Description:
Structure probing data (DMS) for a 177-nucleotide construct. For DMS the reverse transcriptase was MarathonRT. It was measured as part of the RMDB library OK2TST.
RNA sequence: GGGAACGACUCGAGUAGAGUCGAAAAUUUGGUUAUAUUGAGCUUGAUCAGCAAUUCUAUUAAUUUCGUCUGUAAGUUGCUCUAUUUCAAUCUGUAUAGAACCUCUGUCUGAGUCUGAAUAUGUGCCUCUUACACGUUCGUUCGCGAACGUGUAAGAAAAAGAAACAACAACAACAAC
Reactivity to DMS in 0.01 (KOAc 150mM, MgCl2 10mM, bicine 150mM(pH8.5), 24C), signal-to-noise 1, nucleotides 027 to 126: u000u000u010g010g020u010u010a050u000a080u000u020g010a050g030c070u000u010g010a130u000c090a000g020c100a040a040u000u000c160u000a130u010u000a090a090u000u000u020c160g020u010c030u000g020u000a090a110g010u010u010g010c070u010c040u000a060u010u000u000c020a030a020u000c050u000g030u010a080u000a070g000a070a070c050c030u000c000u000g010u010c040u010g010a110g010u000c010u010g040a050a080u030a020u000g040u020g020c070c010
Conditions: 150 mM KOAc, 10 mM MgCl2 and 150 mM bicine (pH 8.5), 24 C. DMS (dimethyl sulfate) methylates the pairing face of unpaired adenines and cytosines.